RNA sequence: GGGAACGACUCGAGUAGAGUCGAAAAUGUUGAUAUGGGACAAUAUAAUUAUGAAGCUUUUAAACAAACCUUACGUUUAUUUAUAAACGAAACACCAAACGUGACAGUUUUUAAAUCGGGAUUUGAUACUUUUGUACAAGUAAACAUUACAGGCGUAUAAUCAAGUGACAUUCGUGUCACUUGAUUAAAAAGAAACAACAACAACAAC
Reactivity to DMS in 0.01 (KOAc 150mM, MgCl2 10mM, bicine 150mM(pH8.5), 24C), signal-to-noise 1, nucleotides 027 to 156: u000g000u010u000g010a130u000a130u000g040g010g020a150c060a050a160u020a120u000a080a060u020u020a170u000g010a120a240g020c050u010u010u000u010a000a070a130c020a030a090a020c020c010u000u000a070c090g010u000u000u010a010u010u010u000a060u020a040a010a130c000g030a100a020a080c060a070c000c010a000a100a090c080g030u000g000a120c010a160g010u000u000u000u020u010a040a030a080u000c030g030g020g030a070u000u020u000g010a120u020a020c060u000u000u010u000g020u000a070c060a050a050g000u000a000a020a010c030a030u000u000a010c110a070g000g000c090g050u000a070
Reactivity to 2A3 in 0.01 (KOAc 150mM, MgCl2 10mM, bicine 150mM(pH8.5), 24C), signal-to-noise 1, nucleotides 027 to 156: u050g010u000u070g030a050u040a080u120g040g060g050a010c010a030a010u150a030u100a260a160u170u100a150u250g010a050a020g000c020u250u150u000u080a030a180a030c040a030a110a090c000c000u120u150a000c000g010u100u010u000a070u060u190u000a080u090a020a010a000c010g010a070a050a000c040a010c050c080a080a010a130c080g080u120g040a030c040a130g000u000u120u020u000u120a030a010a030u080c010g010g000g050a070u000u010u150g050a010u110a120c000u090u150u020u170g080u010a000c030a040a000g000u000a040a070a050c010a000u040u060a000c010a010g010g000c010g040u110a030